The record gives the reactivity of an RNA of 207 nucleotides to DMS and 2A3. The 2A3 profile rests on 806 reads. Reactivities are given for positions 27 through 156.
RNA sequence: GGGAACGACUCGAGUAGAGUCGAAAACAAUCACGCUACUAUUGUCUGUGAAACUGGUGACUGUUGGGAUAAUGCCUCACUUAGGACUGGAACAUAGUUGAGGACAAUGUCCGCUUCCAGUUGUUCGCCAAGAUGAACGACAAUCAAAGCUGGAAGAUCCUGAUAGACGUUUCGACGUCUAUCAGGAAAAAGAAACAACAACAACAAC
Reactivity to DMS in 0.01 (KOAc 150mM, MgCl2 10mM, bicine 150mM(pH8.5), 24C), signal-to-noise 1, nucleotides 027 to 156: c030a060a100u000c020a030c050g040c070u030a090c120u040a130u010u000g000u000c010u020g050u000g030a120a030a190c040u000g010g020u000g000a050c010u000g010u000u010g010g040g050a160u000a120a150u000g010c020c020u040c010a010c050u000u000a290g000g030a250c050u010g010g030a030a150c040a100u000a060g010u000u030g010a080g000g100a040c010a040a050u000g000u000c000c000g000c010u000u000c010c010a040g010u000u010g040u000u000c040g010c000c010a080a170g000a130u040g000a200a080c050g000a030c010a080a030u000c120a050a120a160g010c010u000g010g000a050a050g000a230
Reactivity to 2A3 in 0.01 (KOAc 150mM, MgCl2 10mM, bicine 150mM(pH8.5), 24C), signal-to-noise 2, nucleotides 027 to 156: c010a000a110u090c070a070c170g000c040u080a030c050u010a040u050u010g030u050c190u140g010u030g090a070a070a100c020u030g040g000u070g070a020c000u030g050u110u090g040g000g000a010u010a080a010u160g030c000c030u000c020a050c020u000u060a050g000g050a070c070u070g160g020a140a020c030a060u090a020g100u060u080g020a050g000g090a010c050a030a050u090g000u000c010c000g090c020u030u000c050c000a000g000u060u120g120u110u140c000g000c010c020a050a010g070a150u050g020a040a000c010g050a040c030a020a020u100c050a060a270a000g000c020u080g050g000a000a040g000a090